An RNA of 177 nucleotides, treated with DMS and 2A3 and read out base by base. The RNA was probed in 150 mM KOAc, 10 mM MgCl2 and 150 mM bicine (pH 8.5) at 24 C. 2A3 adducts were read by reverse transcription with SuperScript II with manganese. For DMS, 7,065 sequencing reads were counted. DMS adducts were read by reverse transcription with MarathonRT.
[RMDB]
RNA sequence: GGGAACGACUCGAGUAGAGUCGAAAAUUAUUGCUGAGGAUCGUGAAGGUAAUGCAACACGUAUCGCUGAAUUAGAAGUUGCAAUGAACGAGCAUUCACAUGAGCUUGCUAAACUGAAAGCAUCCGACCUAUAUCCACUGUUCGCAGUGGAUAUAGGAAAAGAAACAACAACAACAAC
Reactivity to DMS in 0.01 (KOAc 150mM, MgCl2 10mM, bicine 150mM(pH8.5), 24C), signal-to-noise 6, nucleotides 027 to 126: u000u010a070u000u010g010c020u000g010a120g010g010a020u000c040g010u000g000a070a280g000g020u000a110a080u000g010c020a040a300c020a040c030g010u010a020u000c030g010c140u010g000a070a090u000u000a050g000a040a040g030u000u000g000c060a020a100u000g000a050a050c070g000a130g010c160a190u000u000c030a040c070a120u000g000a110g010c030u000u000g010c010u000a030a030a100c090u010g000a070a060a080g020c040a060u000c020c030g000a210
Reactivity to 2A3 in 0.01 (KOAc 150mM, MgCl2 10mM, bicine 150mM(pH8.5), 24C), signal-to-noise 5, nucleotides 027 to 126: u060u030a070u070u080g000c020u040g020a030g090g020a020u050c020g010u020g040a040a040g020g020u070a070a020u100g030c000a000a010c010a010c040g080u100a030u040c030g010c110u070g050a110a080u040u050a060g050a120a020g040u050u060g030c030a030a040u070g020a040a010c070g020a040g050c060a090u040u060c000a020c020a080u110g030a010g040c020u030u130g050c000u070a060a090a070c040u050g060a100a050a010g010c000a010u010c000c030g050a070